[RMDB]
RNA sequence: GGGAACGACUCGAGUAGAGUCGAAAAUGCUAACAGGAUGAUUGACCAUGACAAAUCAACCAACGGAAAUUGCCAUUGUCGGCGGAGGAAUGGUCGGCGGCGCACUGGCGCUGGGGCUGGCACAGCACCCCCGAGUACAGUUCGCUGUACUCGGGGGAAAAGAAACAACAACAACAAC
Reactivity to 2A3 in 0.01 (KOAc 150mM, MgCl2 10mM, bicine 150mM(pH8.5), 24C), signal-to-noise 1, nucleotides 027 to 126: u090g040c010u020a070a040c020a080g040g060a060u050g010a050u070u070g020a020c030c020a060u010g040a080c040a030a100a010u050c010a000a080c010c030a030a000c080g050g100a050a060a090u100u070g030c030c000a000u000u110g110u040c040g000g000c020g050g050a050g010g050a120a000u090g040g000u030c030g060g000c010g050g020c030g030c010a050c150u090g120g000c020g050c060u040g000g000g050g000c020u010g000g000c030a000c020a100g020c010a070
Reactivity to DMS in 0.01 (KOAc 150mM, MgCl2 10mM, bicine 150mM(pH8.5), 24C), signal-to-noise 2, nucleotides 027 to 126: u000g000c030u000a140a140c100a070g010g020a040u000g010a070u000u000g000a090c060c040a060u000g000a100c100a040a140a080u000c080a030a070c030c050a080a140c150g030g000a090a090a140u000u000g010c010c050a130u020u000g010u010c030g000g030c070g000g000a080g010g000a090a000u000g010g000u000c000g040g020c080g040g000c030g030c040a060c240u000g020g020c040g000c040u010g000g000g000g010c100u000g040g000c030a060c170a090g000c060a180